[RMDB]
RNA sequence: GGGAACGACUCGAGUAGAGUCGAAAAGAUAUGGAACAUCCGAGAUGGUUAACGAUGAACUACUCUGUAGGGUCGGAAACGACCUGAGGGAGCAUCGUUAACCAUCGUUUGACGAUGUUCCUAAGUCGAUCCACACAGAGUUCGCUCUGUGUGGAUCAAAAGAAACAACAACAACAAC
Reactivity to DMS in 0.01 (KOAc 150mM, MgCl2 10mM, bicine 150mM(pH8.5), 24C), signal-to-noise 2, nucleotides 027 to 126: g010a060u000a300u030g000g020a030a020c010a030u000c010c000g000a230g010a020u000g000g010u000u000a020a000c000g000a040u000g000a020a030c010u000a300c010u010c000u000g010u030a300g000g050g000u000c000g000g000a070a160a290c010g020a030c000c010u000g000a150g010g050g000a040g000c010a030u030c000g020u000u000a010a000c000c010a000u000c020g010u020u020u000g000a190c300g000a000u010g000u000u010c000c000u000a030a090g000u000c050